[RMDB]
Source information
An RNA of 177 nucleotides, treated with 2A3 and DMS and read out base by base. For 2A3 the reverse transcriptase was SuperScript II with manganese. The DMS profile rests on 13,619 reads. It was measured as part of the RMDB library OK2TRN. DMS adducts were read by reverse transcription with MarathonRT.

RNA sequence: GGGAACGACUCGAGUAGAGUCGAAAAUAAGAGGCAUGCUGAGAGAUUGCUCCUAAUGACCAAUUUUGUAGUUGCUAGUUAAAAUGCCAUUUGUGAUUUUUCUUAGUUUGGGGCAGGGAUAGUUCAGGAUAUACGACCAAUUCGUUGGUCGUAUAUCAAAAGAAACAACAACAACAAC
Reactivity to 2A3 in 0.01 (KOAc 150mM, MgCl2 10mM, bicine 150mM(pH8.5), 24C), signal-to-noise 1, nucleotides 027 to 126: u120a010a010g050a020g040g000c000a010u050g040c030u020g050a010g000a010g000a130u030u120g050c000u010c030c020u080a100a060u120g040a050c010c000a020a020u060u060u040u120g090u050a110g000u060u100g020c000u000a010g050u080u060a060a060a020a080u120g020c020c030a090u090u090u090g110u050g040a090u010u040u030u000u020c020u070u070a160g020u070u070u150g020g000g020g020c040a030g010g010g000a050u070a060g040u090u060c000a000g000
Reactivity to DMS in 0.01 (KOAc 150mM, MgCl2 10mM, bicine 150mM(pH8.5), 24C), signal-to-noise 7, nucleotides 027 to 126: u010a080a100g010a110g010g010c030a020u000g020c050u000g000a110g010a080g010a100u000u000g000c090u000c020c040u010a070a080u010g010a100c110c070a070a070u000u010u000u010g010u000a070g010u000u000g010c020u000a070g010u000u010a020a050a070a060u000g010c030c030a120u000u000u000g020u010g010a060u000u000u000u000u010c040u010u000a060g010u000u000u000g010g000g000g020c040a040g000g000g010a080u010a060g010u000u000c080a110g010